[RMDB]
RNA sequence: GGGAACGACUCGAGUAGAGUCGAAAAGUGUGGGAUAGACGGGACUAGUCUUGGCCGUCGUCUUCCAGGACGAUGCUAAAGGAGUCGUGGUGCAUACGGUGGUUCCAUGGAGGAACGGUACGCCGUGCGAGGCUUAAUGUUUCGACAUUAAGCCUCGAAAAGAAACAACAACAACAAC
Reactivity to 2A3 in 0.01 (KOAc 150mM, MgCl2 10mM, bicine 150mM(pH8.5), 24C), signal-to-noise 2, nucleotides 027 to 126: g040u030g020u040g000g000g020a050u030a050g030a010c010g010g000g010a050c030u020a010g100u020c010u040u040g030g010c020c020g010u000c000g010u000c000u150u050c040c020a010g000g000a000c000g010a010u020g000c000u080a070a010a120g070g000a040g040u000c030g050u060g020g030u090g010c020a030u070a070c000g050g000u020g060g000u010u030c000c010a050u170g270g120a140g070g000a060a000c000g040g070u130a050c030g010c010c040g000u050g000
Reactivity to DMS in 0.01 (KOAc 150mM, MgCl2 10mM, bicine 150mM(pH8.5), 24C), signal-to-noise 3, nucleotides 027 to 126: g010u010g010u000g000g000g000a060u000a080g000a030c050g010g000g010a070c040u000a070g000u010c080u000u000g010g010c050c040g010u000c000g010u000c000u000u010c090c190a120g010g000a070c010g000a030u020g000c030u010a030a060a060g000g000a030g000u000c010g010u010g000g020u000g000c150a140u000a040c050g010g010u000g020g000u000u000c000c020a150u020g020g020a300g000g000a020a020c050g010g000u020a170c120g020c020c020g000u010g000

This 177-nucleotide RNA was probed chemically with 2A3 and DMS. It was measured as part of the RMDB library OK2TRN. For 2A3, 1,589 sequencing reads were counted. The reactions ran in a buffer of 150 mM KOAc, 10 mM MgCl2 and 150 mM bicine (pH 8.5), at 24 C. Values cover nucleotides 27 to 126. The DMS profile rests on 3,054 reads.